[RMDB]
Source: RMDB libraries RFM100 and RFMREP, as collected in RNAgym. This 177-nucleotide RNA was probed chemically with DMS and 2A3. Conditions: 150 mM KOAc, 10 mM MgCl2 and 150 mM bicine (pH 8.5), 24 C.
RNA sequence: GGGAACGACUCGAGUAGAGUCGAAAAAUUAUAAUGACACUACCUUCUUAAAUGGACAAAUUGCGUCUAGCAAUAAUGAGAUUGAGCAAUAACAGGUCUGUGAUGCCCUUAGAUGCACGCGCGCUACGCGGUGUUGACGAUUCGUCGUCAACACCGCAAAAGAAACAACAACAACAAC
Reactivity to DMS in 0.01 (KOAc 150mM, MgCl2 10mM, bicine 150mM(pH8.5), 24C), signal-to-noise 1, nucleotides 027 to 126: a020u000u030a180u100a100a090u000g000a040c010a120c010u000a170c050c090u010u050c030u000u000a020a030a040u010g000g000a080c110a040a090a010u020u000g020c000g000u000c070u020a030g000c030a010a040u000a090a050u010g020a160g000a170u000u000g010a120g010c060a040a020u000a040a080c140a000g000g000u000c030u000g010u000g000a140u000g000c040c030c010u000u000a050g020a100u030g000c050a010c060g020c110g060c070g000c090u010a060c190
Reactivity to 2A3 in 0.01 (KOAc 150mM, MgCl2 10mM, bicine 150mM(pH8.5), 24C), signal-to-noise 2, nucleotides 027 to 126: a020u230u190a120u070a100a170u130g020a000c000a000c060u120a030c010c010u090u100c000u050u180a150a120a120u070g140g000a040c000a020a220a050u040u000g000c010g070u090c150u100a150g010c060a030a080u190a100a100u110g010a050g000a120u080u090g000a000g010c020a040a080u100a100a020c020a020g080g000u000c000u060g030u060g020a050u080g050c000c080c000u020u060a020g000a050u050g020c030a020c000g020c000g000c050g020c030u030a000c000